[RMDB]
RNA sequence: GGGAACGACUCGAGUAGAGUCGAAAAGCCCCCGUCUUCGGACGGGGGCAAUUAACGGUCGGCGCAUGCAGCUAGUCGAAAAAGCUGCUCGACCUUUUGCUAAAAUACGACCCUUCGGGGUCGUAAACUUAGCAUCAAGGUUCGCCUUGAUGCUAAGAAAAGAAACAACAACAACAAC
Reactivity to DMS in 0.01 (KOAc 150mM, MgCl2 10mM, bicine 150mM(pH8.5), 24C), signal-to-noise 1, nucleotides 027 to 126: g060c000c020c000c070c000g060u000c000u000u030c140g020g010a000c000g040g030g030g030g040c000a000a030u000u010a050a090c190g000g000u000c000g020g010c160g020c230a070u010g000c000a040g010c000u000a080g000u000c280g000a060a140a070a050a010g000c010u010g020c030u000c040g000a010c000c000u040u000u000u000g000c060u010a030a040a060a230u000a000c010g010a020c000c000c000u000u000c220g020g000g000g000u000c000g000u000a010a020a150
An RNA of 177 nucleotides, treated with DMS and read out base by base.
Values are in units of 0.01, from 0 to 300, in steps of 10.
For DMS the reverse transcriptase was MarathonRT.
Conditions: 150 mM KOAc, 10 mM MgCl2 and 150 mM bicine (pH 8.5), 24 C.
Values cover nucleotides 27 to 126.